This 177-nucleotide RNA was probed chemically with DMS and 2A3. Reactivities are given for positions 27 through 126. The reactions ran in a buffer of 150 mM KOAc, 10 mM MgCl2 and 150 mM bicine (pH 8.5), at 24 C. For DMS the reverse transcriptase was MarathonRT. The 2A3 profile rests on 1,062 reads.
RNA sequence: GGGAACGACUCGAGUAGAGUCGAAAAGGGGCACGUUUUCCCGGCAAGCCGGAUAUGCGCCCCGUCCGUGUUCAGUUGCGGGCAUCCGUGCUUGCAUCCGCGCAAAUGGCGCGCGGCAGAAGAAUGAACCUCCAUUUAGCUUCGGCUAAAUGGAGGUAAAAGAAACAACAACAACAAC
Reactivity to DMS in 0.01 (KOAc 150mM, MgCl2 10mM, bicine 150mM(pH8.5), 24C), signal-to-noise 3, nucleotides 027 to 126: g010g000g000g000c000a050c020g020u010u020u000u000c010c010c010g000g020c000a030a010g000c010c000g000g010a030u000a010u000g020c070g010c010c010c010c000g010u000c000c000g000u000g020u000u030c300a140g050u010u000g020c000g010g000g000c010a010u010c010c010g020u020g020c010u000u000g040c020a110u010c000c000g000c000g000c000a120a110a130u000g020g010c190g030c000g000c010g000g010c300a070g000a080a070g010a120a150u000g010a150
Reactivity to 2A3 in 0.01 (KOAc 150mM, MgCl2 10mM, bicine 150mM(pH8.5), 24C), signal-to-noise 1, nucleotides 027 to 126: g000g000g000g000c020a000c010g020u060u010u000u000c000c010c000g010g000c010a030a000g020c000c000g040g000a020u060a000u070g020c020g000c010c010c000c010g000u020c000c010g060u060g090u080u280c300a300g070u260u120g080c010g000g000g020c000a000u060c010c000g040u110g000c000u010u000g000c010a030u010c000c000g060c010g000c000a000a100a300u180g210g000c080g000c000g000c000g060g000c040a100g060a260a000g100a130a050u170g060a050
The DMS profile rests on 2,248 reads.